[RMDB]
RNA sequence: GGGAACGACUCGAGUAGAGUCGAAAAUAGCGAUCUAAGACAGUAUGACAGUGAUGAACCAGAGUCUAGAUCACUAGCAAGCUGGAUUCAGAGUGAAUUCAACAAGGCAUGUGAAUUGACAGAUUCGAGUUGGAUUGAACUUGAUGAAAUAGGAGAAAUAGGAAAGAGUCUUCGGACUCUUUCCUAUAAAAGAAACAACAACAACAAC
Reactivity to DMS in 0.01 (KOAc 150mM, MgCl2 10mM, bicine 150mM(pH8.5), 24C), signal-to-noise 1, nucleotides 027 to 156: u000a010g020c020g000a070u000c000u000a040a070g010a030c000a110g010u000a140u010g010a130c040a130g000u000g070a140u030g020a140a060c050c020a090g010a170g010u000c000u000a000g030a030u000c010a030c030u000a070g030c040a110a210g020c030u000g040g010a080u000u000c040a180g000a120g050u010g000a050a050u000u000c000a010a090c030a040a150g020g060c040a030u030g030u000g000a050a120u000u050g000a100c020a110g000a120u000u050c000g000a160g030u020u000g020g010a070u030u000g040a080a090c030u000u010g010a090u000g010a060a090a090u000a090g020g000a100g010a110a200
Reactivity to 2A3 in 0.01 (KOAc 150mM, MgCl2 10mM, bicine 150mM(pH8.5), 24C), signal-to-noise 1, nucleotides 027 to 156: u080a000g070c020g030a000u000c030u070a040a100g000a010c020a010g160u120a060u200g130a110c070a090g030u040g060a110u170g110a180a000c040c050a060g020a080g040u080c000u000a000g000a000u040c000a000c060u040a010g060c010a000a080g140c000u060g010g010a020u090u000c030a060g100a110g080u120g020a030a000u000u010c010a010a000c020a080a020g020g010c060a030u020g120u040g030a050a110u240u070g010a010c030a000g010a010u080u000c040g070a030g070u010u030g000g060a060u000u030g060a030a010c020u030u000g020a030u020g050a110a110a000u110a020g100g040a060g030a010a150
Structure probing data (DMS and 2A3) for a 207-nucleotide construct.